RNA sequence: GGGAACGACUCGAGUAGAGUCGAAAAGUCGGACGCGCUCGACGCCGACGUCGCGGGCCAGUUCUACACCCUGGACGGCGCGGCUGAGCUGCGUGCGAAGGUCGAGGCGCUCGAGCAUGGCCGGAUCGCUCGAGAAUUUCUUCGGAAAUUCUCGAGCAAAAGAAACAACAACAACAAC
Reactivity to 2A3 in 0.01 (KOAc 150mM, MgCl2 10mM, bicine 150mM(pH8.5), 24C), signal-to-noise 2, nucleotides 027 to 126: g070u040c000g000g050a010c000g000c000g010c040u020c040g060a110c020g000c010c000g020a100c030g020u050c020g000c010g080g000g020c060c040a030g010u040u090c100u150a150c110a180c070c000c000u020g110g020a040c020g000g020c010g010c020g030g000c060u150g000a020g030c030u090g070c070g120u120g000c000g040a080a000g090g000u010c000g010a020g020g000c020g020c040u000c020g000a000g010c040a000u000g060g010c010c000g000g020a070u150c080